[RMDB]
RNA sequence: GGGAACGACUCGAGUAGAGUCGAAAAAAGGAGGCUGAGUCUGAUGAAGCAAGACUUUGUUGAUACACUCCUCCUAGACAAAAGGGUGGGGAGAGCAGCCCGUACUGGAGAAAGCCACAGGGCUCACUGCGUAAGUGCUGUUCGCAGCACUUACGCAAAAAGAAACAACAACAACAAC
Reactivity to 2A3 in 0.01 (KOAc 150mM, MgCl2 10mM, bicine 150mM(pH8.5), 24C), signal-to-noise 1, nucleotides 027 to 126: a000a000g090g000a040g000g040c090u020g000a010g000u000c000u000g010a090u060g080a110a000g000c160a110a000g010a020c050u080u000u000g000u000u150g070a240u060a210c010a010c100u000c010c000u020c000c000u060a010g060a050c100a030a020a020a000g060g000g020u010g000g060g000g000a120g000a000g000c000a000g060c000c000c000g000u020a040c060u040g010g000a060g040a040a010a070g080c000c000a010c050a120g010g000g030c060u040c000a010c020
Reactivity to DMS in 0.01 (KOAc 150mM, MgCl2 10mM, bicine 150mM(pH8.5), 24C), signal-to-noise 2, nucleotides 027 to 126: a110a020g000g060a020g000g000c300u000g000a130g030u010c020u010g030a080u000g010a060a120g000c050a150a000g000a230c010u000u000u000g000u000u000g010a060u040a110c200a180c060u060c010c000u000c010c000u000a110g040a250c110a060a100a020a060g010g040g000u000g060g020g000g000a040g000a020g000c250a030g010c010c090c070g000u050a080c250u020g040g000a090g000a120a060a140g000c010c000a160c160a120g000g000g000c060u030c090a150c080